Source: RMDB library OK3TST, as collected in RNAgym. The record gives the reactivity of an RNA of 207 nucleotides to DMS and 2A3. DMS adducts were read by reverse transcription with MarathonRT.
RNA sequence: GGGAACGACUCGAGUAGAGUCGAAAAGGAAAAUCUUUGAAAAGAAUGAAAAGGUGAAGCUUGUUAGGUCACGAGUUAUUGCUGAAAUGAGUGGCGUAUUUCAUCCUUUUGAAAAAAUAAAAGAAGUAAAAGAGUUUGCAAGUGGAUAUGAGGUUAGCUAGUAAUGCUUUUUCGAAAGCAUUACUAGAAAAGAAACAACAACAACAAC
Reactivity to DMS in 0.01 (KOAc 150mM, MgCl2 10mM, bicine 150mM(pH8.5), 24C), signal-to-noise 1, nucleotides 027 to 156: g000g020a140a030a100a130u010c060u000u000u000g030a080a140a070a100g010a090a060u020g010a040a020a030a110g040g030u000g010a050a090g020c060u010u020g020u010u000a140g060g030u000c040a090c090g020a180g000u020u000a090u020u000g020c030u000g000a090a120a080u020g010a120g040u000g000g020c020g020u000a100u000u000u000c020a050u000c020c000u000u000u000u020g000a000a000a070a060a090a150u020a090a050a060a140g020a060a130g000u000a040a060a040a170g000a100g020u000u000u000g020c040a060a090g000u030g000g000a080u000a070u000g010a070g050g010u000u000a100g020
Reactivity to 2A3 in 0.01 (KOAc 150mM, MgCl2 10mM, bicine 150mM(pH8.5), 24C), signal-to-noise 2, nucleotides 027 to 156: g080g010a000a110a070a060u020c020u010u100u110g010a030a070a060a100g080a070a050u120g040a050a040a030a030g050g000u080g050a020a020g020c050u150u080g020u140u160a060g050g050u010c040a040c030g020a030g020u070u060a080u240u270g100c080u100g040a070a060a090u060g000a020g040u040g010g000c040g020u030a080u020u040u030c020a050u130c030c000u020u070u010u050g040a000a100a000a000a000a060u150a040a040a000a000g040a050a000g010u060a020a040a050a040g050a020g000u050u300u120g070c090a110a060g020u000g030g060a070u040a060u190g020a020g070g000u050u070a010g030